Notes
Chemical mapping of a 207-nucleotide RNA with DMS and 2A3. High DMS reactivity at an A or C suggests that its Watson-Crick edge is free. Values cover nucleotides 27 to 156.
RNA sequence: GGGAACGACUCGAGUAGAGUCGAAAAGACGCCAUUAGAAGAAGAGGCUAGGGGGUAUUCCGGUGUGGGAUACUUAGUAAUAUGCAACGCUAAUUGCAUAAGAUUGUAGGACGGAAUUUACAGUCUUUAGAGAUAAGCACGUUCGCGUGCUUAUCAAUCCCAUUUACAGUUUCGACUGUAAAUGGGAAAAAGAAACAACAACAACAAC
Reactivity to DMS in 0.01 (KOAc 150mM, MgCl2 10mM, bicine 150mM(pH8.5), 24C), signal-to-noise 2, nucleotides 027 to 156: g000a090c040g000c060c020a120u000u000a170g020a100a060g000a100a080g000a060g000g020c050u000a040g030g080g040g020g040u000a050u000u010c010c000g030g060u020g060u000g010g020g040a030u000a050c040u000u020a070g010u000a050a120u000a050u000g010c010a020a030c090g020c190u000a080a130u000u000g000c000a100u000a000a060g000a050u000u000g010u000a080g030g000a210c060g000g000a060a240u000u000u000a030c000a060g010u000c010u010u010u010a150g000a300g010a020u000a000a010g010c020a000c000g010u000u000c300g020c040g060u000g020c000u000u000a000u000c000a010a100
Reactivity to 2A3 in 0.01 (KOAc 150mM, MgCl2 10mM, bicine 150mM(pH8.5), 24C), signal-to-noise 2, nucleotides 027 to 156: g040a010c030g020c020c000a000u080u130a040g090a200a020g030a030a020g010a030g050g000c020u030a070g030g010g010g010g000u020a020u030u020c020c040g090g030u130g040u150g090g030g000a020u030a080c010u000u060a010g020u040a020a130u010a010u080g010c010a030a000c050g020c220u080a090a030u090u010g000c000a000u030a050a030g040a020u030u080g010u040a000g000g060a020c040g040g020a040a020u090u040u050a060c020a010g000u000c010u020u050u070a120g040a010g000a040u000a000a000g000c000a000c000g020u040u020c080g010c010g060u000g010c000u000u010a000u000c000a000a010
The DMS profile rests on 2,930 reads.